An RNA of 207 nucleotides, treated with 2A3 and DMS and read out base by base. For DMS, 1,524 sequencing reads were counted. The reactions ran in a buffer of 150 mM KOAc, 10 mM MgCl2 and 150 mM bicine (pH 8.5), at 24 C. Values cover nucleotides 27 to 156.

RNA sequence: GGGAACGACUCGAGUAGAGUCGAAAAGAAAGAAAGAAAUGAGUUUUCUGCGACUGACGGAUUAUUGCAGAGCACUGCAAGGGAACAGAAAAACUCUUUUUCAGCCGACCGUCUGGGCGCACCUGAAUCACGACCGGAAGCUUCGGCUUCCGGUCAACGUUAUUGAAUAGUUCGCUAUUCAAUAACGAAAAGAAACAACAACAACAAC
Reactivity to 2A3 in 0.01 (KOAc 150mM, MgCl2 10mM, bicine 150mM(pH8.5), 24C), signal-to-noise 2, nucleotides 027 to 156: g040a000a060a000g080a020a060a000g060a030a150a050u230g020a080g020u030u030u010u020c010u020g020c010g030a050c000u040g000a020c000g010g000a050u070u200a040u270u000g010c000a020g030a110g110c110a080c300u000g000c020a000a070g030g000g000a130a050c040a040g030a060a080a000a010a040c020u080c000u080u010u020u010u020c020a030g010c000c000g040a020c010c000g030u030c020u080g000g060g060c020g000c020a030c010c000u050g050a080a070u200c030a080c220g000a000c010c020g020g000a000a000g000c020u020u080c140g040g000c000u010u020c020c000g000g000u000c000a000a000
Reactivity to DMS in 0.01 (KOAc 150mM, MgCl2 10mM, bicine 150mM(pH8.5), 24C), signal-to-noise 1, nucleotides 027 to 156: g010a080a080a060g000a120a060a050g030a090a110a050u020g020a090g040u020u000u000u000c000u000g000c000g000a300c020u000g030a120c120g060g020a170u000u000a140u000u010g000c040a030g030a290g030c220a050c010u000g050c080a030a100g000g000g030a110a300c000a060g020a020a020a000a020a020c050u000c040u010u000u010u010u010c000a240g030c030c000g000a060c060c000g000u000c050u010g040g030g000c010g010c030a040c050c020u030g000a090a110u020c060a070c080g000a020c020c010g090g010a060a010g020c000u000u010c300g070g070c000u010u030c020c000g000g000u000c030a000a020